[RMDB]
RNA sequence: GGGAACGACUCGAGUAGAGUCGAAAAUGGUCAAACGCAACGUCACCUGGCUUCCCGGCUCGGCCGUCACCUGCUCGGGGUGCAGGUAGGCGACGGCGGGUAGCCCGCCCAGUGGUGCGGGGCCCCGCGCUAGCCGGUAGUUCGCUACCGGCUAGCGAAAAGAAACAACAACAACAAC
Reactivity to 2A3 in 0.01 (KOAc 150mM, MgCl2 10mM, bicine 150mM(pH8.5), 24C), signal-to-noise 4, nucleotides 027 to 126: u160g040g000u060c050a080a060a060c080g020c080a050a030c040g050u050c030a020c020c020u010g080g020c000u110u090c030c000c000g030g070c070u090c060g080g030c080c010g050u060c010a020c020c000u010g010c050u120c150g100g000g010g030u030g000c010a010g010g020u060a130g030g000c020g030a050c030g020g020c000g000g010g000u010a030g050c000c000c000g000c010c010c020a120g120u160g060g010u100g000c010g020g000g020g000c000c010c000c000g020
Reactivity to DMS in 0.01 (KOAc 150mM, MgCl2 10mM, bicine 150mM(pH8.5), 24C), signal-to-noise 1, nucleotides 027 to 126: u000g010g000u050c070a070a080a100c120g000c120a110a050c030g010u040c020a090c020c000u010g000g000c020u000u000c020c000c000g020g030c010u030c120g000g030c000c010g000u000c020a000c000c030u000g000c040u020c100g020g010g000g010u000g020c000a090g000g000u000a090g010g000c000g020a050c000g040g010c000g000g000g020u020a160g000c010c000c030g020c000c000c010a130g010u020g000g020u020g020c000g000g000g000g000c030c010c000c020g010
The record gives the reactivity of an RNA of 177 nucleotides to 2A3 and DMS. For 2A3, 3,076 sequencing reads were counted. It was measured as part of the RMDB library OK1LIB. For DMS the reverse transcriptase was MarathonRT.